RNA sequence: GGGAACGACUCGAGUAGAGUCGAAAAACACCAAAACUGAAAACGGACGGCAAUCCUUCCACGACGAUACUUACUUUCCUUUGAUCGUCGUUACUACUGGCAUAGCCACAAAGGAGAACAAACAUGAGCGCGGACACUGACUUCGGUCAGUGUCCAACCGUCAAUGGUACUUCGGUACCAUUGACGGAAAAGAAACAACAACAACAAC
Reactivity to 2A3 in 0.01 (KOAc 150mM, MgCl2 10mM, bicine 150mM(pH8.5), 24C), signal-to-noise 1, nucleotides 027 to 156: a000c010a090c080c020a120a040a040a100c130u130g080a010a020a010a000c040g020g010a000c040g010g000c040a070a000u030c000c010u060u080c070c000a020c000g000a000c000g000a000u140a300c010u100u060a020c010u130u200u090c020c000u030u030u020g020a000u030c010g010u010c020g000u030u170a010c000u000a020c000u000g020g000c040a140u130a120g000c020c000a020c000a030a100a040g010g000a030g000a090a000c020a070a110a010c010a050u160g030a070g160c160g010c080g040g000a010c000a000c000u030g000a000c000u060u040c130g090g000u000c000a000g000u030g000u010c000c000a000a000